[RMDB]
RNA sequence: GGGAACGACUCGAGUAGAGUCGAAAAGAUGCAGAUGGCACGCUUACAAGUUUGGGUCAUAUUGACGCUGUUUUUCCGGUUCUUCACGGCCCAAACGGUGAAGACGGAACCUUGCAAGGUUUGAUAGAGUCGAUCGAUAUUUCGAUAUCGAUCGACUAAAAGAAACAACAACAACAAC
Reactivity to 2A3 in 0.01 (KOAc 150mM, MgCl2 10mM, bicine 150mM(pH8.5), 24C), signal-to-noise 1, nucleotides 027 to 126: g030a010u030g000c010a010g110a190u040g020g080c030a010c050g010c090u090u090a040c010a100a080g000u040u010u060g040g020g010u010c090a010u020a120u220u160g010a060c090g080c100u030g110u040u260u000u030u030c010c040g010g030u050u030c010u060u010c030a000c080g000g000c030c000c010a020a020a000c000g000g000u060g000a000a010g010a000c020g040g000a030a030c010c000u010u050g070c070a110a120g040g000u110u130u200g100a060u080a080g150
Reactivity to DMS in 0.01 (KOAc 150mM, MgCl2 10mM, bicine 150mM(pH8.5), 24C), signal-to-noise 2, nucleotides 027 to 126: g000a130u010g010c010a070g020a070u000g000g050c300a090c080g010c030u010u010a100c160a100a160g000u000u010u000g020g000g030u000c000a170u010a100u010u000g000a060c200g000c040u010g010u000u000u030u000u000c120c020g030g000u000u000c000u000u010c040a040c080g000g000c010c030c020a030a010a080c000g020g030u010g010a010a010g030a120c070g000g000a010a110c090c010u010u020g030c150a080a140g010g020u000u000u010g010a150u010a070g010

Chemical mapping of a 177-nucleotide RNA with 2A3 and DMS. The RNA was probed in 150 mM KOAc, 10 mM MgCl2 and 150 mM bicine (pH 8.5) at 24 C. It was measured as part of the RMDB library OK2TST. Reactivities are given for positions 27 through 126.